This 177-nucleotide RNA was probed chemically with DMS and 2A3. The reactions ran in a buffer of 150 mM KOAc, 10 mM MgCl2 and 150 mM bicine (pH 8.5), at 24 C. It was measured as part of the RMDB library OK1LIB. The 2A3 profile rests on 3,380 reads.
RNA sequence: GGGAACGACUCGAGUAGAGUCGAAAAGAAGAGAGUAGAAGAUGGCCGACAUGGUCCCAGCCCCUCGCUGGCGCCGGCUGGGCAACACCAUUGCACUCCGGUGGCGUAUGGUCCAAGAGAGAAAGAAAUUUAUUAAUACCUUCGGGUAUUAAUAAAUAAAAGAAACAACAACAACAAC
Reactivity to DMS in 0.01 (KOAc 150mM, MgCl2 10mM, bicine 150mM(pH8.5), 24C), signal-to-noise 5, nucleotides 027 to 126: g010a110a040g010a070g010a090g010u020a050g010a070a100g000a090u000g000g010c030c030g000a100c110a080u010g010g010u010c050c010c010a070g010c020c050c050c070u030c130g010c030u010g000g000c080g000c050c070g000g010c080u000g000g000g000c200a050a070c110a110c160c120a130u000u010g010c020a050c030u000c030c040g010g030u000g010g020c030g030u000a030u040g000g020u020c020c050a070a120g000a080g010a110g000a090a090a120g000a070a070
Reactivity to 2A3 in 0.01 (KOAc 150mM, MgCl2 10mM, bicine 150mM(pH8.5), 24C), signal-to-noise 4, nucleotides 027 to 126: g100a060a020g090a000g030a020g030u160a020g030a140a010g050a090u070g020g000c020c000g030a100c060a110u110g010g020u080c000c030c000a020g000c010c000c000c000u040c030g040c040u020g070g010c030g020c030c020g010g010c130u020g000g010g000c010a030a010c030a030c060c030a040u030u080g010c040a020c030u010c010c020g010g010u030g040g010c010g020u070a100u110g020g000u000c010c010a100a000g050a010g010a010g020a090a110a020g040a030a210